[RMDB]
Source: RMDB libraries RFM100 and RFMREP, as collected in RNAgym. The record gives the reactivity of an RNA of 177 nucleotides to 2A3 and DMS. DMS adducts were read by reverse transcription with MarathonRT.
RNA sequence: GGGAACGACUCGAGUAGAGUCGAAAAGCGUGAUUGACGGCUACGAUCGUCCUCGGACGCAUCCAGUGCUGUAGAGGAUCGUUACUCGGCUCGGUUUCUACCUUGCCGGGGUGGUCGCACGGCGGUCCGGGUGUACAUAUUUCGAUAUGUACACCCGAAAAGAAACAACAACAACAAC
Reactivity to 2A3 in 0.01 (KOAc 150mM, MgCl2 10mM, bicine 150mM(pH8.5), 24C), signal-to-noise 9, nucleotides 027 to 126: g040c020g020u050g050a150u060u170g070a080c020g030g000c020u070a030c040g090a110u070c030g040u030c010c010u030c030g150g300a020c040g000c010a020u090c090c070a110g070u040g050c010u050g040u130a050g010a030g060g010a020u100c030g030u050u080a100c000u000c000g000g010c000u000c000g020g000u090u270u030c050u070a030c000c000u010u030g000c000c000g000g000g000g010u010g010g000u020c010g000c040a010c020g070g020c020g020g000u030c020
Reactivity to DMS in 0.01 (KOAc 150mM, MgCl2 10mM, bicine 150mM(pH8.5), 24C), signal-to-noise 7, nucleotides 027 to 126: g010c030g020u030g010a120u000u020g010a120c010g010g000c020u010a090c110g010a070u000c030g000u000c000c040u000c070g000g020a100c130g020c040a050u010c120c140a150g000u010g010c010u000g000u030a150g000a060g000g010a010u010c050g030u000u020a250c010u010c000g010g020c020u010c120g000g000u000u010u040c290u030a070c010c000u000u000g000c000c010g010g000g000g010u010g020g020u000c020g010c050a030c040g010g010c020g000g000u010c060